[RMDB]
RNA sequence: GGGAACGACUCGAGUAGAGUCGAAAAGGUGCUCUGAAUGGAGUGCUCUACUGAGAUUAUAAAAUAGAAGGAAAGCUAUUAUCUCUUACAACAGGGCAGGGCUUGUUGGAAUAGGCGGUAAAGUCUAAAAACUACCUCACCUUCGGGUGAGGUAGAAGAAAUAUCACAGCUUCGGCUGUGAUAUUUCAAAAGAAACAACAACAACAAC
Reactivity to 2A3 in 0.01 (KOAc 150mM, MgCl2 10mM, bicine 150mM(pH8.5), 24C), signal-to-noise 2, nucleotides 027 to 156: g020g010u020g010c010u000c050u110g180a200a140u220g030g000a010g020u050g000c010u020c010u060a070c040u020g010a010g010a040u070u030a040u240a140a080a100a020u060a050g070a110a040g080g050a070a000a000g000c010u010a010u130u010a030u030c020u000c010u020u120a090c010a110a030c020a080g050g020g040c010a030g000g030g000c010u010u010g010u030u000g010g000a050a030u030a040g010g000c040g000g030u090a110a050a020g030u000c020u090a070a100a030a000a020c000u000a000c000c000u000c000a000c000c000u040u010c230g040g000g000u000g000a000g000g000u000a000g000a000a000
The record gives the reactivity of an RNA of 207 nucleotides to 2A3. Conditions: 150 mM KOAc, 10 mM MgCl2 and 150 mM bicine (pH 8.5), 24 C. The data come from the RNA Mapping Database (RMDB), library M2RFPK. Reactivities are rounded to 0.1 and cut off at 0 and 3. The 2A3 profile rests on 1,452 reads.